[RMDB]
RNA sequence: GGGAACGACUCGAGUAGAGUCGAAAACAACAGACAGGAUUUACUGAUGGAUUAUAUAUGGGAGCAUGGCAUAGGGGAAAGAAAGAUUGACACCUAAGUUUGGGGUCUAGGUUCUGAUGCAUUGUGUCUAGCACAGUGGUUAGCUUAUAGUAGGAGAAAUGCUAGGUAUCUUCGGAUACCUAGCAUUAAAAGAAACAACAACAACAAC
Reactivity to DMS in 0.01 (KOAc 150mM, MgCl2 10mM, bicine 150mM(pH8.5), 24C), signal-to-noise 2, nucleotides 027 to 156: c050a090a080c070a090g000a150c040a090g030g000a150u020u020u000a110c060u010g020a120u000g030g040a130u000u030a060u000a160u010a090u020g000g030g000a040g050c070a050u000g010g010c000a100u010a110g040g010g010g000a060a070a110g020a030a100a040g010a110u000u010g000a080c040a070c010c040u000a060a130g020u000u000u000g000g010g020g000u010c030u000a050g020g000u010u000c030u000g020a090u000g030c050a110u000u010g020u000g020u010c080u010a130g020c020a030c050a090g040u010g010g000u020u000a060g040c070u000u000a070u000a100g010u010a110g010g010a160g000a050
Reactivity to 2A3 in 0.01 (KOAc 150mM, MgCl2 10mM, bicine 150mM(pH8.5), 24C), signal-to-noise 3, nucleotides 027 to 156: c030a010a010c000a010g140a020c020a020g070g080a110u110u140u050a080c030u080g030a030u030g030g050a030u090u100a040u100a100u100a050u180g030g000g000a030g050c050a030u020g010g030c000a020u080a090g030g000g010g030a050a060a000g030a010a050a000g050a060u030u130g010a050c050a070c060c020u120a130a190g050u020u040u080g010g000g020g000u000c020u030a010g030g000u100u020c020u050g050a030u050g010c030a020u000u090g010u020g060u070c100u040a060g040c000a000c020a070g000u000g010g030u060u040a010g000c010u060u030a060u040a120g100u010a030g040g020a020g070a040
The record gives the reactivity of an RNA of 207 nucleotides to DMS and 2A3. DMS adducts were read by reverse transcription with MarathonRT. The data come from the RNA Mapping Database (RMDB), library OK3TST. For 2A3, 1,213 sequencing reads were counted. The RNA was probed in 150 mM KOAc, 10 mM MgCl2 and 150 mM bicine (pH 8.5) at 24 C. The DMS profile rests on 3,412 reads.